[RMDB]
Background
This 177-nucleotide RNA was probed chemically with DMS and 2A3. High 2A3 reactivity points to a flexible backbone, as in loops and unpaired stretches. Values cover nucleotides 27 to 126.

RNA sequence: GGGAACGACUCGAGUAGAGUCGAAAAGAUAUGGAACGUCUUUGGGCAACAGCAUGUUGAUCGGAAACGAUCACAUGACAUGCCUUUGGACGUUCCUAAGUCAAAGUGUGGAGUUCGCUCCACACAACAGCUAAAUUUUGUUCGCAAAAUUUAGCUGAAAAGAAACAACAACAACAAC
Reactivity to DMS in 0.01 (KOAc 150mM, MgCl2 10mM, bicine 150mM(pH8.5), 24C), signal-to-noise 4, nucleotides 027 to 126: g000a050u010a300u010g000g000a020a000c010g020u000c000u000u010u000g000g010g000c010a050a090c300a230g000c010a000u000g010u010u010g020a000u000c010g010g000a140a090a210c010g030a020u000c000a010c000a000u000g000a030c130a230u000g000c000c000u000u000u000g000g000a010c000g020u000u000c010c000u000a010a080g010u010c050a080a120a150g000u000g000u000g010g000a020g030u010u010c280g020c000u000c000c000a000c000a000c010a080a170
Reactivity to 2A3 in 0.01 (KOAc 150mM, MgCl2 10mM, bicine 150mM(pH8.5), 24C), signal-to-noise 4, nucleotides 027 to 126: g000a010u090a050u200g000g010a010a000c000g000u030c010u020u030u020g020g010g000c040a160a110c080a300g110c000a010u050g030u210u290g240a000u000c010g030g030a090a040a060c010g000a010u020c010a000c000a000u000g040a070c010a040u070g010c000c000u010u000u000g000g000a000c000g000u010u000c000c010u000a000a010g010u000c060a090a090a180g000u020g000u000g010g010a010g010u040u140c250g170c110u000c000c000a000c000a000c000a000a000